Source: RMDB library RFM100, as collected in RNAgym. An RNA of 177 nucleotides, treated with DMS and 2A3 and read out base by base. 2A3 adducts were read by reverse transcription with SuperScript II with manganese. Conditions: 150 mM KOAc, 10 mM MgCl2 and 150 mM bicine (pH 8.5), 24 C. Reactivities are given for positions 27 through 126.

[RMDB]
RNA sequence: GGGAACGACUCGAGUAGAGUCGAAAACGCGAGGCGACCGGGAGCGGCUGGGUUCCCGGCUGCGCGCCCUUCGGCCAGGCCGGGAGCCGCGCCAGUCGGAGCCCCCGGCCCAGCGUGGUCCGCCUCCGGAUCAAAAUGGAUUCGUCCAUUUUGAUCCAAAAGAAACAACAACAACAAC
Reactivity to DMS in 0.01 (KOAc 150mM, MgCl2 10mM, bicine 150mM(pH8.5), 24C), signal-to-noise 3, nucleotides 027 to 126: c060g000c060g000a080g010g010c050g000a090c030c000g020g000g000a080g030c070g000g010c030u000g000g010g000u000u000c050c000c000g000g000c000u010g000c140g030c130g000c100c050c210u020u030c130g020g000c000c060a250g020g000c010c020g000g000g000a010g000c120c050g030c030g010c180c030a050g010u000c050g000g010a110g040c050c050c010c000c000g020g020c040c000c010a160g010c050g010u000g000g010u010c020c020g010c070c020u000c030c200
Reactivity to 2A3 in 0.01 (KOAc 150mM, MgCl2 10mM, bicine 150mM(pH8.5), 24C), signal-to-noise 5, nucleotides 027 to 126: c040g030c070g010a060g000g020c030g020a060c010c010g010g020g070a090g060c060g020g000c020u030g040g000g010u020u040c030c000c000g000g010c000u000g000c030g020c020g000c010c000c000u180u180c090g010g000c030c070a120g060g060c000c000g000g010g000a020g040c060c010g000c010g010c010c010a000g010u010c010g010g020a040g030c020c010c000c010c010g040g000c010c000c000a020g030c040g070u070g000g010u060c080c050g010c010c000u030c020c030